[RMDB]
RNA sequence: GGGAACGACUCGAGUAGAGUCGAAAAUCCUUCACGCCAUGUAGUAGCGUCUGCGUUGCUCUCGUGUGCUUCGAGAAGGACGCUAGCCUUGAUGCCACGCCGGGCGGGCUCUACGAGAGGCUGGCUGUCAACAGAGAGAUUUCGAUCUCUCUGUUGAAAAAGAAACAACAACAACAAC
Reactivity to 2A3 in 0.01 (KOAc 150mM, MgCl2 10mM, bicine 150mM(pH8.5), 24C), signal-to-noise 6, nucleotides 027 to 126: u000c010c000u030u080c060a040c060g000c020c010a070u130g050u100a040g020u040a010g040c010g050u060c090u150g050c040g120u070u090g070c010u020c000u020c050g070u080g070u130g110c030u050u060c050g100a130g020a070a050g040g000a020c030g000c040u030a030g010c000c010u040u100g040a070u130g020c020c020a110c060g020c030c090g080g040g020c000g000g010g010c020u020c020u060a070c040g030a020g010a010g110g030c000u010g000g020c020u040g080
Reactivity to DMS in 0.01 (KOAc 150mM, MgCl2 10mM, bicine 150mM(pH8.5), 24C), signal-to-noise 8, nucleotides 027 to 126: u000c010c010u000u000c070a130c150g020c020c020a050u000g010u010a060g010u000a020g010c040g010u000c080u000g010c080g020u000u000g000c070u000c050u000c040g020u000g010u010g010c100u000u000c040g000a090g010a080a070g010g010a050c090g010c020u000a030g010c030c020u000u000g000a130u000g020c020c030a070c080g030c080c110g010g010g010c020g010g000g010c010u000c070u000a050c100g000a220g010a050g000g020c020u000g000g010c060u010g010
This 177-nucleotide RNA was probed chemically with 2A3 and DMS. For 2A3, 11,867 sequencing reads were counted. It was measured as part of the RMDB library OK2TST. DMS (dimethyl sulfate) methylates the pairing face of unpaired adenines and cytosines. Reactivities are given for positions 27 through 126. The RNA was probed in 150 mM KOAc, 10 mM MgCl2 and 150 mM bicine (pH 8.5) at 24 C.